[RMDB]
The record gives the reactivity of an RNA of 177 nucleotides to DMS and 2A3. The reactions ran in a buffer of 150 mM KOAc, 10 mM MgCl2 and 150 mM bicine (pH 8.5), at 24 C. Reactivities are given for positions 27 through 126. For DMS, 3,407 sequencing reads were counted. DMS adducts were read by reverse transcription with MarathonRT.
RNA sequence: GGGAACGACUCGAGUAGAGUCGAAAAGCCAUCGCUUUCGAGCGAUGGCAUUGCCCAAAGAGGACCUGGGGGUGUCUGGGCUGCUAAACACAUCAGCCGUUCUACCGCUAAAUUUCGAUUUAGCGAAAGUACCAGUGAUUUUCGAAUCACUGGUACUAAAAGAAACAACAACAACAAC
Reactivity to DMS in 0.01 (KOAc 150mM, MgCl2 10mM, bicine 150mM(pH8.5), 24C), signal-to-noise 3, nucleotides 027 to 126: g020c000c000a010u000c000g030c010u000u010u020c140g020a000g030c000g010a020u000g000g000c000a000u000u000g000c000c000c020a080a120a110g000a090g030g000a050c050c040u000g000g010g020g000g010u020g000u010c050u000g000g000g020c040u000g010c100u010a060a050a090c150a060c100a080u000c020a010g000c020c010g010u010u000c010u010a110c100c040g000c010u000a000a020a020u000u010u010c150g020a030u000u000u000a000g010c010g000a020a050
Reactivity to 2A3 in 0.01 (KOAc 150mM, MgCl2 10mM, bicine 150mM(pH8.5), 24C), signal-to-noise 2, nucleotides 027 to 126: g010c010c000a000u000c000g020c020u100u090u160c250g110a000g020c000g010a000u000g020g000c000a000u020u120g030c000c000c000a030a080a020g080a030g010g020a040c030c030u070g020g000g030g010g020u020g010u010c010u040g030g040g000c000u030g020c030u070a130a100a000c060a000c010a120u100c010a010g000c010c000g010u040u000c030u100a150c000c060g000c020u020a040a000a000u130u070u090c210g080a020u010u000u020a010g000c000g000a130a120